[RMDB]
RNA sequence: GGGAACGACUCGAGUAGAGUCGAAAAUAAGUUAUUUGGUGUUAACACAGGUGAUCUGUGUCAUUUAAGAUCAUGGCAUUAAUGUUGAUAUAUCAGGAGUUGCACCUAAAUGUCUUCAGAGGCCAGAUAACAAAAAUGAAGGCUAGAUGUGGGUGGACGUCAGUCAUACUUUCGAGUAUGACUGACGAAAAGAAACAACAACAACAAC
Reactivity to 2A3 in 0.01 (KOAc 150mM, MgCl2 10mM, bicine 150mM(pH8.5), 24C), signal-to-noise 2, nucleotides 027 to 156: u170a050a000g010u040u010a050u110u090u060g070g000u050g060u140u230a170a030c020a000c000a050g070g050u030g150a060u110c040u040g000u010g010u010c010a000u050u130u070a080a020g060a060u100c060a070u080g080g000c030a030u030u140a190a050u110g010u020u060g060a070u070a030u000a080u240c050a020g050g000a070g080u030u030g040c020a010c010c000u040a090a160a070u030g000u010c000u010u040c040a050g060a110g250g000c030c010a020g050a040u050a030a010c040a020a090a040a000a040u070g010a020a000g010g000c050u080a050g000a140u070g030u080g080g020g000u030g010g010a000
Background
Chemical mapping of a 207-nucleotide RNA with 2A3. The RNA was probed in 150 mM KOAc, 10 mM MgCl2 and 150 mM bicine (pH 8.5) at 24 C. The data come from the RNA Mapping Database (RMDB), library OK3TST.